Annotation:
The record gives the reactivity of an RNA of 207 nucleotides to 2A3 and DMS. Conditions: 150 mM KOAc, 10 mM MgCl2 and 150 mM bicine (pH 8.5), 24 C. For DMS the reverse transcriptase was MarathonRT. Values cover nucleotides 27 to 156. The 2A3 profile rests on 3,613 reads.

[RMDB]
RNA sequence: GGGAACGACUCGAGUAGAGUCGAAAAUGGAUUCCCUUCGUCAACGUGCACCUGGUGUUCCGACAAUCUGAUUGCAACGAUUUUUGUCUUCCUUUCUUCGUCUCAUCACUUAAUACACAUUGGAAAAUUGGCGUUAUGGGAGCGGCAAAUACCCAUAUAAAUUAGCUACGUUCGCGUAGCUAAUUUAAAAAGAAACAACAACAACAAC
Reactivity to 2A3 in 0.01 (KOAc 150mM, MgCl2 10mM, bicine 150mM(pH8.5), 24C), signal-to-noise 4, nucleotides 027 to 156: u140g040g020a050u010u040c010c000c000u020u040c070g020u040c030a070a050c070g030u050g030c040a040c050c030u040g000g030u030g040u140u040c060c050g060a030c090a040a040u060c060u070g040a130u080u100g040c040a080a070c070g040a090u010u030u030u050u130g030u030c020u020u090c010c010u070u060u060c030u060u060c030g040u000c010u000c060a090u060c020a020c050u070u090a070a040u140a110c080a020c030a130u070u100g070g040a060a100a060a070u070u080g050g000c010g050u060u020a050u080g000g010g000a040g020c020g020g010c030a000a070a030u090a110c020c010c000a030u070a010
Reactivity to DMS in 0.01 (KOAc 150mM, MgCl2 10mM, bicine 150mM(pH8.5), 24C), signal-to-noise 3, nucleotides 027 to 156: u010g020g000a210u000u000c010c000c000u000u000c080g030u000c020a060a050c060g010u010g020c020a130c050c040u000g000g030u010g020u000u000c030c040g030a140c090a060a070u010c050u010g010a120u000u000g010c030a070a090c040g000a080u000u000u010u010u010g010u000c030u000u000c020c020u000u010u000c040u000u000c030g020u010c020u000c040a090u000c040a070c060u010u010a050a090u000a090c080a050c050a100u010u030g010g010a070a050a060a130u000u000g020g010c050g010u000u010a060u010g010g010g000a090g020c050g010g010c030a030a070a110u000a170c000c000c010a030u010a140